An RNA of 177 nucleotides, treated with DMS and 2A3 and read out base by base. 2A3 adducts were read by reverse transcription with SuperScript II with manganese. Values cover nucleotides 27 to 126. It was measured as part of the RMDB library OK1LIB. The DMS profile rests on 1,848 reads.
[RMDB]
RNA sequence: GGGAACGACUCGAGUAGAGUCGAAAAAGGCCUGGUGGUGCGAGCGCCCAACGCGGCCACGCAGCUGGUGCAACUGCGCGAGGCCGAAAUGAUCCGCGCGUUCAAUGAUGAUCGUGUUAGCGGUGGGACGCGGCAUAAUGUUCGCAUUAUGCCGCGUAAAAGAAACAACAACAACAAC
Reactivity to DMS in 0.01 (KOAc 150mM, MgCl2 10mM, bicine 150mM(pH8.5), 24C), signal-to-noise 2, nucleotides 027 to 126: a130g010g000c020c000u000g000g080u000g000g030u020g030c090g010a030g000c150g020c020c060c010a180a150c190g010c020g000g000c040c000a240c000g000c000a050g020c100u000g030g030u050g070c100a110a300c020u000g030c000g030c110g010a100g000g000c040c000g000a010a070a020u050g020a080u000c040c050g020c000g020c030g000u000u010c020a100a290u070g000a070u010g060a020u000c040g000u020g000u000u030a090g000c000g000g000u000g020g000g000
Reactivity to 2A3 in 0.01 (KOAc 150mM, MgCl2 10mM, bicine 150mM(pH8.5), 24C), signal-to-noise 2, nucleotides 027 to 126: a020g080g050c040c020u070g000g120u030g010g020u090g060c000g050a010g050c050g030c020c000c000a020a000c050g060c000g060g000c020c000a010c000g000c000a010g000c010u210g060g020u170g100c040a120a000c000u000g010c020g000c000g030a050g000g000c020c000g000a040a030a000u180g050a000u000c000c000g000c000g000c000g010u010u040c030a110a120u300g090a300u200g000a000u050c000g040u120g040u150u150a080g000c000g010g090u000g010g060g040